[RMDB]
RNA sequence: GGGAACGACUCGAGUAGAGUCGAAAAGGGGACGUUCAUGGAUUCGACAGGGGUCCCCCGAGCUCAUUAAGCGUGUCGGAGGGUUGGCUUCGUCAUCAACACACACAGUUUAUAAUAACUGGCAAAUCAAACAAUAAUUUCGCAGUAGCUGCCUAAUCAACAUUCUUCAGUUCGCUGAAGAAUGUUGAAAAGAAACAACAACAACAAC
Reactivity to 2A3 in 0.01 (KOAc 150mM, MgCl2 10mM, bicine 150mM(pH8.5), 24C), signal-to-noise 1, nucleotides 027 to 156: g000g020g020g000a010c050g040u070u000c080a110u120g110g020a200u240u100c080g050a020c090a010g020g000g000g000u000c000c000c010c030c030g030a010g010c020u040c070a060u150u150a110a100g000c030g030u080g060u090c010g000g000a010g000g020g040u140u050g010g020c000u010u010c050g060u000c000a010u060c010a020a020c000a000c000a000c000a000c030a060g010u020u020u010a300u040a300a080u120a000a000c000u030g060g000c020a020a000a100u130c050a080a070a140c030a000a090u180a140a030u040u140u030c060g000c010a020g060u080a010g000c040u020g010c000c000u040a040a080u000
Record summary
This 207-nucleotide RNA was probed chemically with 2A3. For 2A3, 605 sequencing reads were counted. 2A3 adducts were read by reverse transcription with SuperScript II with manganese. The RNA was probed in 150 mM KOAc, 10 mM MgCl2 and 150 mM bicine (pH 8.5) at 24 C.